This 207-nucleotide RNA was probed chemically with 2A3 and DMS. For DMS the reverse transcriptase was MarathonRT. For 2A3, 5,033 sequencing reads were counted. The reactions ran in a buffer of 150 mM KOAc, 10 mM MgCl2 and 150 mM bicine (pH 8.5), at 24 C. For 2A3 the reverse transcriptase was SuperScript II with manganese.
RNA sequence: GGGAACGACUCGAGUAGAGUCGAAAAGUGAACGAUCUCGGUUGUUUCUCUGAAGGCAUGAUCACCCCGUCCGAUACGGAAGUUCGUGCUUCCGUCGAACGCGAAAGUCGGACGGCGGCCAUGAGUCAAUAUGUUUAAGGCUUCGGCCUUAAACAAAUAUAGUUCAAUAAUUCGUUAUUGAACUAUAAAAAGAAACAACAACAACAAC
Reactivity to 2A3 in 0.01 (KOAc 150mM, MgCl2 10mM, bicine 150mM(pH8.5), 24C), signal-to-noise 5, nucleotides 027 to 156: g150u120g080a130a050c050g020a090u040c040u030c110g020g000u000u000g010u000u020u000c040u000c040u070g100a100a040g130g020c000a010u020g010a030u100c050a030c000c000c000c000g000u000c000c000g000a010u010a020c010g010g020a010a010g010u090u300c180g100u300g050c000u010u010c010c000g010u010c020g050a160a040c080g000c020g150a070a060a010g030u000c000g000g000a000c000g000g000c020g000g000c010c000a010u030g020a010g050u040c010a020a100u080a080u240g000u000u000u000a000a000g010g010c010u030u080c290g080g000c010c000u000u000a000a010a000c000a000a010a000
Reactivity to DMS in 0.01 (KOAc 150mM, MgCl2 10mM, bicine 150mM(pH8.5), 24C), signal-to-noise 3, nucleotides 027 to 156: g010u000g030a070a110c030g010a050u000c000u000c020g000g010u000u010g020u020u000u000c000u000c040u010g020a140a130g010g000c020a050u000g010a080u000c130a080c010c000c000c000g010u000c000c020g010a070u000a030c030g010g010a050a030g000u000u010c240g000u000g000c000u000u010c000c020g010u010c040g000a090a150c090g000c100g010a110a100a170g000u010c010g020g000a040c010g000g030c050g000g000c040c010a040u000g000a110g010u000c060a070a170u000a090u000g020u010u000u000a010a000g000g010c010u000u000c300g050g010c000c000u010u000a000a000a010c000a010a040a140